[RMDB]
Overview:
Chemical mapping of a 170-nucleotide RNA with DMS and 2A3. The RNA was probed in 150 mM KOAc, 10 mM MgCl2 and 150 mM bicine (pH 8.5) at 24 C. 2A3 adducts were read by reverse transcription with SuperScript II with manganese. It was measured as part of the RMDB library 15KLIB.
RNA sequence: GGGAACGACUCGAGUAGAGUCGAAAAUUUUGAUGCACAGCCCUUGACCAGGAAGGUACAACAGCUUUUCUAUACAGAGGACAUGGCCUCAAGAUUUGCUGAUGGGCUCUGCUUAUUUUGGAACUGUCGCCCGAUGGCUUCGGCCAUCGGAAAAGAAACAACAACAACAAC
Reactivity to DMS in 0.01 (KOAc 150mM, MgCl2 10mM, bicine 150mM(pH8.5), 24C), signal-to-noise 2, nucleotides 027 to 129: u060u030u010u010g000a050u030g030c000a030c120a060g010c050c000c060u040u040g010a000c100c040a190g070g030a170a040g000g040u060a090c110a190a170c010a040g060c020u010u000u000u000c030u050a120u060a120c180a190g030a070g020g010a190c160a130u050g000g020c000c020u000c000a070a030g000a020u000u000u000g010c050u040g040a100u000g000g010g000c000u020c020u030g030c020u020u060a060u000u000u000u000g030g000a100a170c110u040g000u010c000g010c010
Reactivity to 2A3 in 0.01 (KOAc 150mM, MgCl2 10mM, bicine 150mM(pH8.5), 24C), signal-to-noise 5, nucleotides 027 to 129: u070u070u050u110g020a010u060g000c010a010c000a050g000c000c010c000u050u100g030a030c000c040a020g070g120a060a030g060g000u160a160c020a100a040c000a060g000c000u000u000u000u010c000u010a100u020a100c090a090g050a020g040g010a010c080a150u130g110g020c000c010u020c000a000a020g000a020u050u050u050g050c050u020g050a100u090g000g000g000c000u000c010u000g010c000u050u040a130u010u130u040u070g120g030a080a060c020u020g010u030c020g010c010